Structure probing data (2A3 and DMS) for a 177-nucleotide construct. Conditions: 150 mM KOAc, 10 mM MgCl2 and 150 mM bicine (pH 8.5), 24 C. The data come from the RNA Mapping Database (RMDB), library M2PK90. For DMS, 5,761 sequencing reads were counted.

RNA sequence: GGGAACGACUCGAGUAGAGUCGAAAAUUUACGGGCCCGGGAGGAGGACCGAAUACACGCGCGCGAGGUCCUCCAGGUAGUACGAACGCGCGCGUCAAUAAUAGUACUACCACCCGGGCCCACCGAAUAUUAGUAACUAAUUCGUUAGUUACUAAUAAAAAGAAACAACAACAACAAC
Reactivity to 2A3 in 0.01 (KOAc 150mM, MgCl2 10mM, bicine 150mM(pH8.5), 24C), signal-to-noise 2, nucleotides 027 to 126: u020u040u100a060c040g000g000g010c010c020c000g000g010g000a060g010g010a000g000g000a000c000c020g060a100a060u210a070c060a010c050g010c010g000c000g000c010g030a060g000g000u000c000c000u000c010c000a010g010g000u000a000g000u000a000c050g010a100a010c020g000c000g000c010g000c000g030u010c030a070a100u210a210a050u080a100g000u000a000c000u000a000c000c000a000c010c010c000g000g000g000c010c000c000a000c000c000g010a020a020
Reactivity to DMS in 0.01 (KOAc 150mM, MgCl2 10mM, bicine 150mM(pH8.5), 24C), signal-to-noise 5, nucleotides 027 to 126: u000u010u010a130c090g020g010g010c000c000c020g010g010g020a110g010g010a010g010g010a020c010c020g010a140a110u000a080c110a090c050g010c000g000c000g010c000g020a070g030g010u000c000c000u000c010c020a010g030g030u000a010g010u000a000c000g010a100a080c050g000c000g000c010g010c010g020u000c050a090a090u010a120a080u010a150g000u000a010c000u000a010c000c010a300c010c010c000g000g000g020c000c000c000a000c000c010g000a100a130